An RNA of 177 nucleotides, treated with 2A3 and read out base by base. The reactions ran in a buffer of 150 mM KOAc, 10 mM MgCl2 and 150 mM bicine (pH 8.5), at 24 C. Source: RMDB library OK1LIB, as collected in RNAgym. For 2A3 the reverse transcriptase was SuperScript II with manganese. 2A3 is a SHAPE reagent: it acylates the 2'-hydroxyl of flexible nucleotides of all four kinds.
[RMDB]
RNA sequence: GGGAACGACUCGAGUAGAGUCGAAAAACCUGGAUAAUAUGGUAUUAGAUUAAUAUGAAUUAAUCCUAGUUUUCUAAUUAUCUUGGCAGUUUCAUCUGCUGACUCUUUAUAAGCAUCUAUAACCAUACGACCGAGUGAUAUUCGUAUCACUCGGUCGAAAAGAAACAACAACAACAAC
Reactivity to 2A3 in 0.01 (KOAc 150mM, MgCl2 10mM, bicine 150mM(pH8.5), 24C), signal-to-noise 1, nucleotides 027 to 126: a010c010c050u040g010g010a000u060a050a070u080a240u110g000g000u110a090u060u000a050g000a000u030u000a120a080u090a120u300g120a090a030u050u050a040a000u000c000c040u010a120g070u020u050u180u070c020u040a050a050u000u070a000u040c050u090u130g000g000c050a020g000u000u230u180c130a300u090c000u070g000c000u070g010a040c040u110c060u020u150u180a250u070a190a000g090c020a050u050c020u020a090u000a050a010c020c000a120u000a140